[RMDB]
RNA sequence: GGGAACGACUCGAGUAGAGUCGAAAAGAAACACCAUGGGACGCCACCUGGGGAUCACGUGGUGCCACCAACCAUGCACCAGUGGAUUCUGAGCCAUGGUUGAGAUGCAGGGAGUGGGAUGGGGCUCCAUGCAGUGGUGCUUCGGCACCACUGCAUGAAAAGAAACAACAACAACAAC
Reactivity to 2A3 in 0.01 (KOAc 150mM, MgCl2 10mM, bicine 150mM(pH8.5), 24C), signal-to-noise 1, nucleotides 027 to 126: g050a020a010a000c040a000c030c060a040u000g010g030g020a050c050g130c060c000a080c040c100u050g130g000g030g010a060u050c030a050c100g040u010g000g000u010g030c030c020a070c000c040a000a040c020c020a030u090g030c000a100c080c010a080g050u010g120g130a030u150u060c020u060g060a010g120c000c020a000u000g000g000u000u070g020a070g000a000u070g030c090a060g010g000g020a100g020u170g030g090g020a090u070g090g030g020g020c010u000c010
Reactivity to DMS in 0.01 (KOAc 150mM, MgCl2 10mM, bicine 150mM(pH8.5), 24C), signal-to-noise 2, nucleotides 027 to 126: g000a130a040a160c060a030c000c000a020u040g010g000g020a110c100g000c030c010a080c130c070u020g000g010g010g000a070u000c070a020c060g020u000g000g020u000g000c040c080a150c110c050a030a080c070c080a060u030g000c020a100c030c010a080g020u000g030g000a070u010u000c060u000g000a130g030c170c010a000u000g000g010u000u010g010a050g000a140u000g000c130a110g010g000g000a050g000u010g000g000g000a150u010g010g000g010g030c050u000c040